[RMDB]
RNA sequence: GGGAACGACUCGAGUAGAGUCGAAAAGAGGGCAGAGGCUGUAUCCGGUCUGCAAACACGACAGGGCUGGAAUGUCACCUGGAGUGACGGACUACUGGCUGUCUCCGGAGUAGGACGUCCGAAGAGAGGGAUGCAGCUCGUUCGCGAGUUGCAUCCCAAAAGAAACAACAACAACAAC
Reactivity to DMS in 0.01 (KOAc 150mM, MgCl2 10mM, bicine 150mM(pH8.5), 24C), signal-to-noise 2, nucleotides 027 to 126: g010a060g000g010g000c020a070g000a070g000g020c050u030g010u020a060u000c050c000g000g000u000c040u000g010c070a070a090a080c080a090c100g000a080c070a080g000g000g010c080u030g010g010a100a070u020g000u020c000a160c000c020u020g070g010a120g000u020g000a050c030g000g000a100c040u010a080c010u030g020g000c040u000g000u000c040u010c020c070g020g000a060g010u000a040g000g000a090c090g000u000c000c020g000a080a100g000a060g000a180
Reactivity to 2A3 in 0.01 (KOAc 150mM, MgCl2 10mM, bicine 150mM(pH8.5), 24C), signal-to-noise 3, nucleotides 027 to 126: g060a000g010g040g010c060a020g030a020g010g000c030u030g030u030a120u030c010c010g010g020u010c020u040g050c010a120a130a010c110a010c050g050a020c010a070g030g050g000c020u030g020g100a110a100u120g030u030c010a040c090c010u060g080g030a060g020u060g000a020c000g000g020a010c030u040a030c000u050g000g080c030u060g030u050c000u010c030c010g000g000a030g030u060a000g030g060a000c030g030u000c030c010g030a090a010g080a000g010a010